An RNA of 177 nucleotides, treated with DMS and 2A3 and read out base by base.
Conditions: 150 mM KOAc, 10 mM MgCl2 and 150 mM bicine (pH 8.5), 24 C.
RNA sequence: GGGAACGACUCGAGUAGAGUCGAAAAACUAAACCUUUACCAGUUAAAUGUAUGACUUGGUAUUGGUGUAAUAAUGCUUCUAGGUUUUCACGAAUAGCAUCAUUUAAUUUUUUACUGCCUAAGCUACUUGUGACUAUCAAUUCGUUGAUAGUCACAAAAAAGAAACAACAACAACAAC
Reactivity to DMS in 0.01 (KOAc 150mM, MgCl2 10mM, bicine 150mM(pH8.5), 24C), signal-to-noise 6, nucleotides 027 to 126: a080c110u020a060a090a020c000c000u010u000u000a000c000c000a050g010u000u000a030a120a140u030g010u020a100u010g010a010c000u010u030g020g000u000a000u000u010g010g010u000g010u010a070a050u010a060a050u000g000c010u000u010c060u000a170g000g010u010u000u020u010c160a080c080g010a090a110u020a050g000c030a030u010c060a040u000u000u010a050a030u010u000u010u000u020u020a080c120u020g010c020c030u010a070a080g000c070u000a040c160
Reactivity to 2A3 in 0.01 (KOAc 150mM, MgCl2 10mM, bicine 150mM(pH8.5), 24C), signal-to-noise 5, nucleotides 027 to 126: a000c060u090a090a020a010c000c000u000u000u000a010c010c000a000g000u010u050a120a220a150u300g140u270a130u190g050a040c040u120u180g000g000u000a010u000u010g000g000u000g000u010a030a060u090a050a000u080g030c020u020u070c060u090a050g060g040u030u050u070u210c110a060c060g060a060a030u090a080g010c020a020u050c000a020u050u150u140a130a150u060u070u060u040u070u080a110c040u060g000c000c000u030a040a050g050c010u040a060c030
For 2A3 the reverse transcriptase was SuperScript II with manganese.